[RMDB]
RNA sequence: GGGAACGACUCGAGUAGAGUCGAAAAGGCGCCGAUGUCAUCGUCGUGCAUGUUGGACUAACCACGUCGGGGACCAUUGGGGCGCAGACGGCGCUGUCGCUGGAUGAGUGUGUUGGUGUGGUCCAGGCGAUCCGGGACGCGGUUGUCAGGGUGAAUCUAGGUUACCUAAAUUCGUUUAGGUAACCUAAAAAGAAACAACAACAACAAC
Reactivity to 2A3 in 0.01 (KOAc 150mM, MgCl2 10mM, bicine 150mM(pH8.5), 24C), signal-to-noise 2, nucleotides 027 to 156: g070g010c000g000c000c000g070a060u050g020u010c040a050u020c030g020u010c000g000u000g070c130a140u160g010u000u040g050g010a170c060u060a040a000c010c000a000c040g010u000c040g030g030g020g010a020c050c000a110u060u120g170g020g000g010c010g000c010a010g040a000c030g030g020c000g060c110u120g030u080c020g030c130u040g030g030a070u040g010a120g100u150g000u000g020u090u070g020g000u090g090u090g040g050u030c020c010a010g080g030c030g000a000u040c040c000g050g050g010a020c020g000c040g010g000u080u020g010u020c070a050g020g020g010u120g050a020a030u110c040
Reactivity to DMS in 0.01 (KOAc 150mM, MgCl2 10mM, bicine 150mM(pH8.5), 24C), signal-to-noise 2, nucleotides 027 to 156: g010g000c000g010c080c010g030a110u010g000u000c060a090u020c010g020u010c030g080u000g000c130a110u010g050u020u010g030g030a160c100u010a090a130c030c020a060c050g040u000c000g030g070g000g020a070c040c030a190u010u000g040g030g000g010c010g020c000a070g010a120c040g040g020c070g090c040u010g020u000c070g010c010u010g000g020a130u020g000a130g030u000g010u000g010u000u000g000g030u000g030u010g050g000u010c000c010a110g030g000c030g010a020u000c030c030g060g010g000a080c010g010c030g000g000u000u000g010u000c030a150g000g050g030u010g010a160a150u000c050

The record gives the reactivity of an RNA of 207 nucleotides to 2A3 and DMS. The RNA was probed in 150 mM KOAc, 10 mM MgCl2 and 150 mM bicine (pH 8.5) at 24 C. For 2A3, 1,006 sequencing reads were counted.